RNA sequence: GGGAACGACUCGAGUAGAGUCGAAAAAGUCAGAGGGCGCUACCAUGCAAACUAGGGCUGGCUACUCUUGCACAGAAUGACAUCUCGAUAAUUGUCAGUGCAAGAAGGACAAUUAUACCAUUUAAUGAAAACGUUUACCUGUUCGCAGGUAAACGAACAACUACACCUCGUUCGCGAGGUGUAGUUGAAAAGAAACAACAACAACAAC
Reactivity to DMS in 0.01 (KOAc 150mM, MgCl2 10mM, bicine 150mM(pH8.5), 24C), signal-to-noise 1, nucleotides 027 to 156: a090g030u000c000a100g040a110g040g000g000c140g000c060u000a040c040c030a100u000g000c090a090a130a230c090u000a070g020g020g100c100u000g020g000c020u000a150c020u000c010u000u000g000c050a050c020a110g020a030a180u000g000a040c010a070u020c040u040c160g010a160u000a050a020u000u010g030u000c000a220g000u000g010c030a000a010g000a050a020g000g000a050c040a020a070u000u000a070u010a110c170c050a160u000u000u000a120a290u000g020a030a060a080a130c020g000u000u000u000a010c000c000u010g020u000u000c300g000c010a010g010g040u010a000a000a000c020g000a020a080
Reactivity to 2A3 in 0.01 (KOAc 150mM, MgCl2 10mM, bicine 150mM(pH8.5), 24C), signal-to-noise 4, nucleotides 027 to 156: a000g010u000c010a000g000a030g090g050g030c020g000c020u120a250c040c080a040u150g040c050a040a040a030c010u070a030g030g050g040c020u010g030g000c000u050a080c010u000c000u000u000g000c020a000c000a000g220a130a180u100g010a010c020a040u010c050u050c100g100a080u060a170a060u100u020g010u000c010a010g020u000g020c000a010a010g010a000a010g030g020a000c010a060a060u120u110a050u070a110c030c050a060u030u060u220a170a170u140g080a040a030a000a000c000g000u000u000u000a000c000c000u000g010u060u070c190g000c090a000g000g000u000a000a000a000c000g000a000a000